[RMDB]
This 177-nucleotide RNA was probed chemically with 2A3 and DMS. 2A3 adducts were read by reverse transcription with SuperScript II with manganese. For 2A3, 14,300 sequencing reads were counted. Conditions: 150 mM KOAc, 10 mM MgCl2 and 150 mM bicine (pH 8.5), 24 C.
RNA sequence: GGGAACGACUCGAGUAGAGUCGAAAAAGCCCCGCGAAAAUAACGUCGAGGUCGUCGUCGGGAAAAUCGUCCGGGCCCCCGUCCCGCGGCCCCAGUUGCUUAAAAUCAAACGCACGCUCGCCGGGGGCAACAGAAUUGAAUUCGUUCAAUUCUGUUGAAAAGAAACAACAACAACAAC
Reactivity to 2A3 in 0.01 (KOAc 150mM, MgCl2 10mM, bicine 150mM(pH8.5), 24C), signal-to-noise 9, nucleotides 027 to 126: a000g050c000c000c010c000g030c020g020a100a080a010a040u120a080a020c020g020u020c020g030a040g060g210u150c070g080u000c010g020u020c020g030g030g050a020a040a010a090u070c030g060u030c050c030g010g030g010c010c030c000c000c000g030u030c010c010c010g090c010g010g010c010c010c010c000a050g020u100u070g010c020u130u160a050a120a100a140u160c070a110a060a030c040g000c010a010c040g010c000u020c020g010c020c000g040g020g000g010g000
Reactivity to DMS in 0.01 (KOAc 150mM, MgCl2 10mM, bicine 150mM(pH8.5), 24C), signal-to-noise 8, nucleotides 027 to 126: a140g000c040c000c010c100g010c040g000a050a040a090a080u030a100a120c030g000u000c030g010a060g010g010u020c080g010u000c030g000u000c020g000g000g000a080a100a100a060u020c050g000u020c050c190g010g010g000c000c020c010c000c020g010u010c010c030c030g000c050g010g000c030c040c060c090a090g000u020u010g010c040u010u030a050a080a100a100u050c150a040a080a110c140g010c040a030c060g020c060u010c190g010c040c010g010g000g010g000g000